[RMDB]
Structure probing data (2A3) for a 207-nucleotide construct. High 2A3 reactivity points to a flexible backbone, as in loops and unpaired stretches.
RNA sequence: GGGAACGACUCGAGUAGAGUCGAAAAGUCUAACGGUGAAGGCGUUCAAACCCGUUCAACCGCCCAUCCCAAUACUGUAGUACUUCGGUAUCGCAGCCCUCCGCCGCGCCCCGCCCGAACGCUGCGGUGGUCGCCCACUCGUGCAGGUAACUCACGACGAUAAUUGAGUCUUCGGACUCAAUUAUCGAAAAGAAACAACAACAACAAC
Reactivity to 2A3 in 0.01 (KOAc 150mM, MgCl2 10mM, bicine 150mM(pH8.5), 24C), signal-to-noise 1, nucleotides 027 to 156: g080u080c010u040a090a030c000g000g040u080g130a160a000g050g000c030g030u060u020c070a100a130a140c030c010c020g010u000u060c060a120a080c060c120g010c000c030c000a060u060c000c010c000a090a110u180a150c000u020g060u080a100g000u030a040c010u040u050c210g050g000u050a040u120c070g000c010a010g000c020c000c000u010c000c000g080c020c020g000c000g000c010c000c000c020g010c000c010c020g000a010a000c000g010c000u020g000c020g000g040u150g040g040u130c010g010c010c010c010a050c000u040c000g010u000g000c040a020g060g000u110a100a050c020u020c030a010c010g010a010